Annotation: Chemical mapping of a 177-nucleotide RNA with 2A3 and DMS. For DMS the reverse transcriptase was MarathonRT. Reactivities are given for positions 27 through 126.
RNA sequence: GGGAACGACUCGAGUAGAGUCGAAAACUGCUUUGCCAGCAAUAAGCUGGGCACCGCCAUGUCCCAUGAGAUCCGGCUCAUGGCCGAGGGUGCGAGGCGCUGCAGGGACCAGGGAGGGCAGGUCCCGGAAGUGUCUGUGAUUCGUCACAGACACUUCAAAAGAAACAACAACAACAAC
Reactivity to 2A3 in 0.01 (KOAc 150mM, MgCl2 10mM, bicine 150mM(pH8.5), 24C), signal-to-noise 6, nucleotides 027 to 126: c010u020g020c020u090u070u110g060c020c010a010g000c020a080a300u220a300a060g010c010u020g040g040g000c010a020c010c030g130c030c010a140u170g030u040c020c000c000a020u060g040a020g010a040u060c070c060g060g000c030u030c060a080u110g050g000c020c060g080a100g050g020g010u060g020c030g030a060g020g020c050g000c040u060g020c050a100g030g000g040a020c020c030a030g050g010g030a090g010g010g030c030a010g020g020u010c020c000c000g000
Reactivity to DMS in 0.01 (KOAc 150mM, MgCl2 10mM, bicine 150mM(pH8.5), 24C), signal-to-noise 6, nucleotides 027 to 126: c060u000g000c030u000u010u000g010c010c010a080g000c020a160a100u010a110a140g010c000u000g000g000g010c020a030c050c020g000c060c040a110u000g010u000c090c000c000a060u000g000a050g000a110u010c090c110g000g000c000u000c060a050u000g010g010c120c090g000a090g000g010g010u000g010c020g000a190g000g000c040g010c080u000g020c050a110g000g000g000a060c070c060a080g010g000g000a080g010g000g000c030a040g000g010u000c000c010c010g010